Chemical mapping of a 207-nucleotide RNA with 2A3 and DMS. The reactions ran in a buffer of 150 mM KOAc, 10 mM MgCl2 and 150 mM bicine (pH 8.5), at 24 C. 2A3 adducts were read by reverse transcription with SuperScript II with manganese. For 2A3, 2,425 sequencing reads were counted. DMS adducts were read by reverse transcription with MarathonRT. Values cover nucleotides 27 to 156.
RNA sequence: GGGAACGACUCGAGUAGAGUCGAAAACUUUCUAGUGACUUGCCAUUUCCAGUUUUGAAACAAUGUGAGAUUUAGUUCACCAAAAAUACAAAAACUCAGUUAAUCAGAAGAUACUGGCAUCUAGUGGCAGAGGCCAGGGGUGAGGCUUAUACAGGAAAGAACUAUAUGGUUUCGACCAUAUAGUUCUAAAAGAAACAACAACAACAAC
Reactivity to 2A3 in 0.01 (KOAc 150mM, MgCl2 10mM, bicine 150mM(pH8.5), 24C), signal-to-noise 4, nucleotides 027 to 156: c010u030u030u020c030u040a030g010u000g040a000c010u030u030g010c030c000a020u030u010u070c050c020a050g030u030u050u040u170g080a060a040a030c070a100a100u140g020u080g060a080g030a070u060u100u100a070g030u060u050c020a080c040c010a050a070a030a060a050u170a090c060a040a150a020a040a030c040u050c060a060g020u080u090a090a060u060c030a020g070a140a000g020a080u070a100c000u010g010g000c010a030u010c050u060a050g050u060g100g000c020a020g020a030g070g020c010c010a010g010g010g010g010u030g010a030g000g030c010u050u040a080u050a070c050a050g130g010a110a100
Reactivity to DMS in 0.01 (KOAc 150mM, MgCl2 10mM, bicine 150mM(pH8.5), 24C), signal-to-noise 2, nucleotides 027 to 156: c010u000u010u000c010u000a030g000u010g020a060c010u000u000g070c030c010a060u010u010u010c090c030a140g000u000u000u000u000g010a100a060a080c140a000a110u000g020u000g010a090g010a170u010u000u000a140g020u000u010c030a080c030c030a010a060a090a080a140u000a130c060a060a050a040a040a090c050u000c030a100g010u000u000a090a120u020c020a090g020a110a170g010a120u000a040c030u000g010g000c110a060u000c020u010a100g000u000g020g020c070a090g000a050g030g010c030c000a040g020g000g020g050u020g010a060g010g020c030u000u000a070u000a090c060a120g000g010a080a190